An RNA of 177 nucleotides, treated with DMS and 2A3 and read out base by base. For 2A3 the reverse transcriptase was SuperScript II with manganese.
[RMDB]
RNA sequence: GGGAACGACUCGAGUAGAGUCGAAAAUGUGUUUAUGUAAGAGGAGCCGUACCUGUUGGUAUGUCUCAUUAUAAUGACACUACCUUCUUAAAUGGACAAAUUGCGUCUAGCAAUAAUGAGAUUGAGCCAUGAUACAUUCCUUCGGGAAUGUAUCAUGAAAAGAAACAACAACAACAAC
Reactivity to DMS in 0.01 (KOAc 150mM, MgCl2 10mM, bicine 150mM(pH8.5), 24C), signal-to-noise 5, nucleotides 027 to 126: u010g010u000g010u000u000u010a070u030g000u010a020a040g020a170g010g020a020g020c030c010g010u000a010c000c000u010g010u000u010g030g030u000a010u000g010u000c000u000c010a060u000u000a010u010a100a180u000g000a020c000a010c010u000a200c030c030u000u010c030u000u010a060a080a080u010g010g000a110c150a040a100a060u000u010g010c050g020u010c170u010a140g000c050a010a020u000a050a070u000g000a130g000a110u000u010g000a110g010c230
Reactivity to 2A3 in 0.01 (KOAc 150mM, MgCl2 10mM, bicine 150mM(pH8.5), 24C), signal-to-noise 7, nucleotides 027 to 126: u090g020u000g030u030u070u080a110u080g030u010a030a010g080a110g300g010a000g010c020c010g010u000a000c000c010u140g210u260u300g060g000u000a000u000g010u000c000u000c010a000u000u010a000u010a040a110u060g000a000c000a000c000u070a070c020c000u050u090c040u050u160a140a150a070u120g050g020a030c030a030a170a070u050u040g010c010g070u080c170u140a040g000c010a000a060u130a070a120u160g060a060g030a100u050u110g050a020g010c010
It was measured as part of the RMDB library RFMREP. The reactions ran in a buffer of 150 mM KOAc, 10 mM MgCl2 and 150 mM bicine (pH 8.5), at 24 C. The 2A3 profile rests on 7,686 reads.